[RMDB]
An RNA of 207 nucleotides, treated with DMS and 2A3 and read out base by base. The reactions ran in a buffer of 150 mM KOAc, 10 mM MgCl2 and 150 mM bicine (pH 8.5), at 24 C. 2A3 adducts were read by reverse transcription with SuperScript II with manganese.

RNA sequence: GGGAACGACUCGAGUAGAGUCGAAAAUCUGGAAUGGCAAUGUUAAAUUUAUCAGAUUAGUUAAUUUGAUUAGCCGUGUGUUAUGGCGUACAAAUUGAUGAAAUUCAAAUGAUAGCACUAUAAGCGUAGGCGCCAAUGUAUCGGACGGUUUGGACAGCAACAGUGUCAGGUUCGCCUGACACUGUUGAAAAGAAACAACAACAACAAC
Reactivity to DMS in 0.01 (KOAc 150mM, MgCl2 10mM, bicine 150mM(pH8.5), 24C), signal-to-noise 1, nucleotides 027 to 156: u000c080u000g000g020a120a110u010g050g020c000a040a060u010g020u010u010a040a090a100u000u010u000a020u020c040a110g010a080u010u010a220g010u000u000a000a030u000u000u000g040a130u000u000a230g040c010c010g070u010g000u010g000u000u000a080u000g010g030c010g090u010a140c050a030a030a050u000u000g020a040u010g000a090a050a100u000u030c060a030a040a070u010g010a110u000a060g030c060a080c090u000a050u000a100a180g000c100g020u000a060g020g030c090g040c020c030a010a080u000g000u010a020u010c040g010g010a070c040g010g000u000u010u010g010g000a170c020a110g010
Reactivity to 2A3 in 0.01 (KOAc 150mM, MgCl2 10mM, bicine 150mM(pH8.5), 24C), signal-to-noise 2, nucleotides 027 to 156: u070c040u030g050g070a070a070u100g030g030c110a070a060u040g040u070u140a120a110a080u100u120u070a110u050c000a030g020a100u010u040a010g070u060u130a010a030u020u030u070g060a120u070u070a030g000c000c040g020u130g000u000g020u120u130a090u160g000g000c010g020u020a060c030a030a040a040u030u030g020a030u060g040a080a040a100u060u070c040a020a030a020u130g060a030u030a030g020c050a010c050u180a100u090a300a020g010c020g030u040a010g080g040c060g010c000c000a030a010u100g010u030a040u040c010g010g000a000c000g000g020u080u110u070g060g000a040c010a030g000
DMS adducts were read by reverse transcription with MarathonRT.
Values are in units of 0.01, from 0 to 300, in steps of 10.